[RMDB]
RNA sequence: GGGAACGACUCGAGUAGAGUCGAAAAGAUAUGGACGAGUUGCGGGAGCAUCUCGGAAACGAGAAUGCAUCGAUCGCACUCGUCCUAAGUCAAAAGAAGUAGUACCACUUCGGUGGUACUACUUCAAGAACUGAAGAGGGUUCGCCCUCUUCAGUUCAAAAGAAACAACAACAACAAC
Reactivity to DMS in 0.01 (KOAc 150mM, MgCl2 10mM, bicine 150mM(pH8.5), 24C), signal-to-noise 3, nucleotides 027 to 126: g010a040u000a300u000g010g000a020c000g000a040g010u010u000g030c000g010g000g000a050g000c000a000u000c000u000c000g020g000a020a090a120c010g000a010g000a060a040u000g000c010a270u010c110g020a100u000c020g000c010a020c010u000c000g000u000c000c000u000a000a040g000u010c040a070a060a090a100g000a020a010g000u000a000g000u000a000c000c000a000c000u010u000c240g010g000u000g000g000u000a000c000u000a000c000u000u000c020a050a070
Reactivity to 2A3 in 0.01 (KOAc 150mM, MgCl2 10mM, bicine 150mM(pH8.5), 24C), signal-to-noise 3, nucleotides 027 to 126: g010a020u040a030u120g000g000a000c010g000a010g030u220u100g140c010g040g020g010a020g010c010a030u000c000u000c010g000g010a030a020a000c010g020a000g040a200a120u030g020c030a290u190c050g170a100u100c020g000c010a010c000u000c000g000u010c000c000u000a010a000g000u010c000a020a020a010a130g010a010a000g000u000a000g000u010a000c000c010a010c040u040u090c300g050g000u010g000g000u000a000c000u000a010c000u000u000c000a000a000